[RMDB]
RNA sequence: GGGAACGACUCGAGUAGAGUCGAAAAAAAGAUAUGGAACGAUGGGAGCUCUUGACUCCUAAGACAGACAGUCGGAAACGACUGUUCGAGGAGUUCCGGGAGCGAGGAUCAUCGUUCCUAAGUCAAAGAUGUAAUAAGAGUUCGCUCUUAUUACAUCAAAAGAAACAACAACAACAAC
Reactivity to DMS in 0.01 (KOAc 150mM, MgCl2 10mM, bicine 150mM(pH8.5), 24C), signal-to-noise 8, nucleotides 027 to 126: a070a060a070g000a040u010a300u010g010g000a010a020c010g000a030u000g000g000g000a040g010c010u000c020u010u000g000a090c010u000c000c000u000a090a060g010a150c300a140g000a020c010a000g010u000c000g010g000a140a130a160c010g010a010c000u000g000u000u000c050g000a030g000g010a040g000u000u010c230c120g020g000g000a010g000c010g010a040g010g000a060u010c030a020u000c000g000u000u000c000c000u000a010a080g010u000c030a100a120a140
Reactivity to 2A3 in 0.01 (KOAc 150mM, MgCl2 10mM, bicine 150mM(pH8.5), 24C), signal-to-noise 4, nucleotides 027 to 126: a000a000a030g080a040u110a050u170g000g010a010a000c000g000a010u000g000g010g010a020g000c000u000c010u030u020g020a020c010u010c000c000u020a130a040g120a040c040a010g040a000c000a000g010u000c010g030g020a070a060a040c010g000a000c000u010g000u030u020c010g010a010g000g010a000g000u240u120c190c020g000g000g000a000g000c030g050a290g040g000a010u030c000a010u020c000g000u000u000c000c000u010a040a010g020u000c010a000a100a130